[RMDB]
RNA sequence: GGGAACGACUCGAGUAGAGUCGAAAAUCGAGAGGAUGAGGACAGAAGGGCAUGGGUUUGUACUCCAUCGGAUGAGCUCUCGGUAAAUAACUGUAGAAUUCAUCAUACAAAUCAUUUAAGGUUACUAGUCAUGCCUAGUGUUCGCACUAGGCAUGACAAAAGAAACAACAACAACAAC
Reactivity to DMS in 0.01 (KOAc 150mM, MgCl2 10mM, bicine 150mM(pH8.5), 24C), signal-to-noise 2, nucleotides 027 to 126: u040c110g000a070g010a090g000g000a040u000g010a050g000g070a050c090a070g010a140a140g010g020g000c130a040u010g000g030g010u000u020u000g000u000a060c220u010c010c080a120u000c080g030g020a000u010g000a050g040c030u000c000u000c000g010g000u010a050a060a120u000a030a000c040u020g010u020a000g000a050a040u000u000c020a020u000c010a200u000a050c120a020a040a030u020c030a090u010u000u000a070a180g010g010u000u000a060c080u030a180
Reactivity to 2A3 in 0.01 (KOAc 150mM, MgCl2 10mM, bicine 150mM(pH8.5), 24C), signal-to-noise 1, nucleotides 027 to 126: u140c030g040a070g040a020g100g000a050u050g000a050g010g000a030c030a040g040a030a080g050g010g000c050a020u080g040g030g030u030u100u020g020u080a060c000u060c080c010a080u090c040g030g000a020u010g000a000g010c000u040c000u010c020g000g020u040a070a140a100u150a050a000c030u040g080u120a010g040a020a010u090u000c020a060u070c000a000u030a100c050a060a230a040u110c050a090u100u120u110a050a020g070g020u070u070a060c040u040a030
Source: RMDB library OK2TST, as collected in RNAgym. An RNA of 177 nucleotides, treated with DMS and 2A3 and read out base by base. DMS adducts were read by reverse transcription with MarathonRT. The reactions ran in a buffer of 150 mM KOAc, 10 mM MgCl2 and 150 mM bicine (pH 8.5), at 24 C.